[RMDB]
RNA sequence: GGGAACGACUCGAGUAGAGUCGAAAAUUAAUCCGGGUUUAAGUUGACGAGGGCAGGGUUUAUCGAGACAUCGGCGGGUGCCCUGCGGUCUUCCUGCGACCGUUAGAGGACUGGUAAACCAAUUUAAUGUAUAAACCAAAUUCGUUUGGUUUAUACAAAAAGAAACAACAACAACAAC
Reactivity to DMS in 0.01 (KOAc 150mM, MgCl2 10mM, bicine 150mM(pH8.5), 24C), signal-to-noise 6, nucleotides 027 to 126: u010u010a080a100u010c020c020g010g010g000u000u000u000a080a140g010u000u010g010a070c100g000a110g000g010g010c050a050g010g010g010u000u010u000a050u010c040g010a120g010a120c160a060u000c070g020g010c090g000g010g010u000g000c010c020c020u000g000c020g000g000u000c020u000u010c090c060u000g010c160g000a030c020c010g010u000u010a050g020a120g010g000a060c060u000g020g010u000a030a050a070c030c040a070a110u010u000u000a050a110
Reactivity to 2A3 in 0.01 (KOAc 150mM, MgCl2 10mM, bicine 150mM(pH8.5), 24C), signal-to-noise 2, nucleotides 027 to 126: u080u040a070a050u050c030c000g060g030g070u130u090u040a040a010g020u040u150g060a050c060g050a060g020g010g030c000a020g000g000g040u050u100u000a090u110c020g020a000g040a100c050a100u080c000g060g020c060g040g050g010u080g060c010c000c000u000g020c030g000g000u000c000u050u040c050c040u010g030c030g030a010c000c000g010u010u030a010g040a100g030g030a040c020u020g010g090u090a100a060a030c010c020a010a010u140u170u180a180a090